The record gives the reactivity of an RNA of 177 nucleotides to 2A3 and DMS. For 2A3 the reverse transcriptase was SuperScript II with manganese. It was measured as part of the RMDB library RFM100. The RNA was probed in 150 mM KOAc, 10 mM MgCl2 and 150 mM bicine (pH 8.5) at 24 C.
RNA sequence: GGGAACGACUCGAGUAGAGUCGAAAAUAGCGUGUCCUCUGUGAGUUCACAGUCGGCAAGGUCAUCGCCCUGACGGGUGAUUGACCUGGUUGAUGAUUAGUCCCGCACCGCGUGAGGCAGGAAACUGAGGCUACCUUGAUUUCGAUCAAGGUAGCCUAAAAGAAACAACAACAACAAC
Reactivity to 2A3 in 0.01 (KOAc 150mM, MgCl2 10mM, bicine 150mM(pH8.5), 24C), signal-to-noise 1, nucleotides 027 to 126: u160a030g050c020g000u050g020u060c030c000u000c000u000g070u040g050a060g070u170u100c020a020c000a100g060u000c000g000g040c020a030a020g000g020u000c000a000u000c020g000c010c000c000u070g210a170c170g000g010g000u000g000a040u100u300g030a000c000c000u000g000g000u000u000g000a080u000g020a020u000u170a040g000u000c000c000c000g000c020a070c000c050g000c080g100u090g000a050g000g070c010a000g000g000a170a030a000c010u080g080
Reactivity to DMS in 0.01 (KOAc 150mM, MgCl2 10mM, bicine 150mM(pH8.5), 24C), signal-to-noise 1, nucleotides 027 to 126: u020a110g010c050g040u000g030u000c000c000u030c030u000g020u000g000a100g000u010u000c020a010c040a200g020u000c070g000g020c010a030a000g000g000u020c000a080u000c000g000c000c000c000u000g070a130c250g000g030g070u000g040a020u040u010g000a000c010c000u010g010g000u000u000g000a070u000g040a150u000u030a060g000u000c020c010c030g000c120a100c030c080g040c050g090u000g030a130g000g050c030a070g000g000a020a100a160c130u050g000